[RMDB]
RNA sequence: GGGAACGACUCGAGUAGAGUCGAAAAGUAAUUGAGACUGAUAGGGAUUUAAGGAUAUUUGGUUCCCACAAGAAUAAGCUAAUAUUAAGUUAUUAUUUUACUUGUGGAGAAGAACUAAAUUGUAUAAGCUGCCUGGUUCUUCUAGACACACAUUGCCAAAGUCAGUAGAGUUCGCUCUACUGACUUUAAAAGAAACAACAACAACAAC
Reactivity to DMS in 0.01 (KOAc 150mM, MgCl2 10mM, bicine 150mM(pH8.5), 24C), signal-to-noise 1, nucleotides 027 to 156: g010u020a080a100u000u000g020a090g040a150c020u030g020a170u000a030g010g040g010a140u020u000u000a110a150g010g030a070u000a050u010u000u000g020g010u020u000c030c010c020a050c000a050a020g000a100a120u010a010a050g000c100u020a040a050u010a060u000u000a100a250g000u000u000a040u000u000a060u000u000u000u000a210c020u010u010g010u000g000g000a250g010a160a260g000a010a000c000u000a010a020a030u010u000g000u010a130u010a110a130g030c070u010g000c060c070u020g010g000u000u000c020u000u000c050u000a100g030a050c060a120c110a050c100a130u000u010g060c080c080
Reactivity to 2A3 in 0.01 (KOAc 150mM, MgCl2 10mM, bicine 150mM(pH8.5), 24C), signal-to-noise 1, nucleotides 027 to 156: g030u040a020a060u090u070g050a010g030a030c060u040g040a100u150a110g000g000g040a050u130u170u130a040a030g020g030a040u010a070u090u000u020g000g000u010u000c000c000c000a000c000a010a000g130a050a170u090a040a000g000c000u000a090a000u060a180u300u090a090a070g030u000u020a000u110u010a000u000u070u020u100a030c000u000u000g000u010g000g020a030g100a240a000g000a010a010c010u020a000a030a060u020u030g080u020a160u030a110a140g030c020u180g000c060c000u000g000g000u000u000c000u000u000c000u040a080g000a000c000a000c000a000c030a180u140u230g030c300c090